[RMDB]
Source: RMDB library TTRDES, as collected in RNAgym. An RNA of 177 nucleotides, treated with DMS and read out base by base.

RNA sequence: GGGAACGACUCGAGUAGAGUCGAAAAAAAGAUAUGGAUUCGUGCUCAUAGACAGCUGGAUCCGAUGAAAGUUCCUCGGAAACGAGGAACUGGAGGAUCCAGUCGAGAGCCCGAAUCCUAAGUCAAAGCCUUUAUAUCGGUUCGCCGAUAUAAAGGCAAAAGAAACAACAACAACAAC
Reactivity to DMS in 0.01 (KOAc 150mM, MgCl2 10mM, bicine 150mM(pH8.5), 24C), signal-to-noise 1, nucleotides 027 to 126: a050a120a150g000a010u010a120u070g000g000a010u020u020c030g010u010g000c010u020c020a270u000a180g010a110c300a110g000c000u010g000g000a010u000c000c000g000a080u000g000a180a140a000g000u000u000c000c000u000c030g010g000a020a010a010c020g000a020g000g000a000a000c000u030g000g010a010g000g030a020u000c000c000a000g010u000c020g000a030g000a000g040c040c050c000g010a010a010u000c000c000u000a000a090g000u010c010a150a180a230
Annotation: The RNA was probed in 150 mM KOAc, 10 mM MgCl2 and 150 mM bicine (pH 8.5) at 24 C.